[RMDB]
RNA sequence: GGGAACGACUCGAGUAGAGUCGAAAAGAUGUCUUGAAUGGAAGGAUCCCUUUGGGAACUUCUCAGGAGGGGGACCUGGGCCAAGGGCUUGACCAGCAUCCUGCUGGCAACUCCAAGGCCCUGGGUGUAUUAUCGCUGUUUUCGAACAGCGAUAAUAAAAAGAAACAACAACAACAAC
Reactivity to 2A3 in 0.01 (KOAc 150mM, MgCl2 10mM, bicine 150mM(pH8.5), 24C), signal-to-noise 2, nucleotides 027 to 126: g060a070u180g040u070c000u050u080g050a160a130u180g050g070a000a010g060g020a280u040c030c000c000u040u080u110g030g000g010a040a010c000u020u000c090u010c010a000g020g030a010g010g010g020g000g030a010c020c000u000g000g000g010c000c010a040a020g030g000g040c050u090u020g140a300c000c000a000g000c010a100u300c040c130u110g010c000u010g000g020c020a010a010c010u000c000c010a010a000g010g000c010c000c000u000g000g000g020u060g030
Reactivity to DMS in 0.01 (KOAc 150mM, MgCl2 10mM, bicine 150mM(pH8.5), 24C), signal-to-noise 7, nucleotides 027 to 126: g010a130u010g010u000c020u010u010g000a280a120u010g010g010a030a010g010g000a140u000c010c000c020u000u000u010g040g010g000a030a150c010u000u000c010u010c030a030g010g000a080g000g000g000g010g010a050c010c010u000g000g010g010c010c010a030a300g000g000g000c300u000u000g000a100c000c000a010g010c010a180u010c270c250u010g000c000u000g010g000c000a000a010c020u000c010c010a040a300g000g000c000c000c000u000g000g000g010u010g010
This 177-nucleotide RNA was probed chemically with 2A3 and DMS. The DMS profile rests on 7,743 reads. The data come from the RNA Mapping Database (RMDB), library OK2TRN. The RNA was probed in 150 mM KOAc, 10 mM MgCl2 and 150 mM bicine (pH 8.5) at 24 C. DMS (dimethyl sulfate) methylates the pairing face of unpaired adenines and cytosines. Reactivities are given for positions 27 through 126.